[RMDB]
RNA sequence: GGGAACGACUCGAGUAGAGUCGAAAAGUGAAAGCUCCUUCUCUCGCAAUGUGUAACUCAUGAUUCUCAUGACCCCUGGUUGGAGAGAUCCGGACUAGGAGCCAGGGGGCCUCUGAGUCUGCCAGCCAAAACUGUCGUAAGUUCGCUUACGACAGAACAUAAUGUCUACGUUCGCGUAGACAUUAUGAAAAGAAACAACAACAACAAC
Reactivity to 2A3 in 0.01 (KOAc 150mM, MgCl2 10mM, bicine 150mM(pH8.5), 24C), signal-to-noise 7, nucleotides 027 to 156: g090u080g040a110a030a020g020c010u040c010c020u050u020c030u010c020u040c030g060c080a070a150u110g070u030g030u140a060a050c020u030c070a050u100g040a100u200u050c040u020c040a030u120g050a090c000c000c010c010u010g040g000u050u080g080g020a060g010a010g010a100u020c030c030g060g070a090c070u110a090g050g000a010g010c010c000a010g000g000g000g000g000c000c000u000c020u030g000a010g030u000c010u040g050c020c030a030g020c030c020a060a060a080a090c010u000g000u000c000g000u000a000a000g000u010u130c210g020c150u000u000a000c000g000a000c000a000g000a000a000
Reactivity to DMS in 0.01 (KOAc 150mM, MgCl2 10mM, bicine 150mM(pH8.5), 24C), signal-to-noise 3, nucleotides 027 to 156: g020u000g000a060a120a170g000c050u000c030c010u000u000c020u000c030u000c040g000c060a090a100u010g030u020g000u000a060a040c050u000c030a080u000g000a090u000u000c030u020c020a080u000g010a090c010c000c010c020u010g020g010u000u000g010g000a100g020a150g000a130u000c000c020g030g010a130c060u010a130g010g010a100g010c010c000a080g010g010g010g020g020c110c020u000c020u000g030a070g020u000c030u010g000c040c050a100g010c010c040a060a060a060a140c010u000g010u000c010g000u010a000a010g020u000u010c300g030c010u000u000a010c010g010a010c000a010g010a040a140

This 207-nucleotide RNA was probed chemically with 2A3 and DMS.
The RNA was probed in 150 mM KOAc, 10 mM MgCl2 and 150 mM bicine (pH 8.5) at 24 C.
For 2A3 the reverse transcriptase was SuperScript II with manganese.